[RMDB]
RNA sequence: GGGAACGACUCGAGUAGAGUCGAAAAUGCAAUUAGUUCGCUAAUUGCACAUGUCUAGUCGCUAGAAAACGAUCAAUACUAGCGACUAGACUUUAUUGAUCGGGGGCCUGGCUUUCGAGCCAGGCAAGGUACUAACCGAAUUCGUUCGGUUAGUACCAAAAGAAACAACAACAACAAC
Reactivity to 2A3 in 0.01 (KOAc 150mM, MgCl2 10mM, bicine 150mM(pH8.5), 24C), signal-to-noise 1, nucleotides 027 to 126: u070g010c000a010a000u000u000a010g010u040u070c180g000c150u010a010a000u010u020g060c000a010c030a040u090g000u000c010u000a000g000u010c000g010c000u030a020g090a070a130a010a040c090g080a100u160c080a050a030u070a220c000u000a000g010c040g000a000c000u010a000g000a000c000u000u000u000a030u020u050g070a030u070c060g020g020g000g030g000c010c000u000g000g050c020u140u040u120c280g070a010g020c000c000a000g000g000c000a000a000
Reactivity to DMS in 0.01 (KOAc 150mM, MgCl2 10mM, bicine 150mM(pH8.5), 24C), signal-to-noise 3, nucleotides 027 to 126: u000g010c000a010a010u000u000a000g020u000u010c210g020c010u000a000a010u000u000g020c000a040c180a110u000g000u000c000u000a000g000u000c000g030c000u010a000g000a120a050a100a140c120g000a050u000c070a060a090u000a200c020u000a000g010c010g010a020c000u000a000g010a000c010u000u000u000a040u000u010g010a060u000c030g000g020g020g010g010c010c000u000g000g000c000u000u000u010c150g000a010g010c000c000a000g010g000c010a000a020
Structure probing data (2A3 and DMS) for a 177-nucleotide construct. For 2A3 the reverse transcriptase was SuperScript II with manganese. The RNA was probed in 150 mM KOAc, 10 mM MgCl2 and 150 mM bicine (pH 8.5) at 24 C.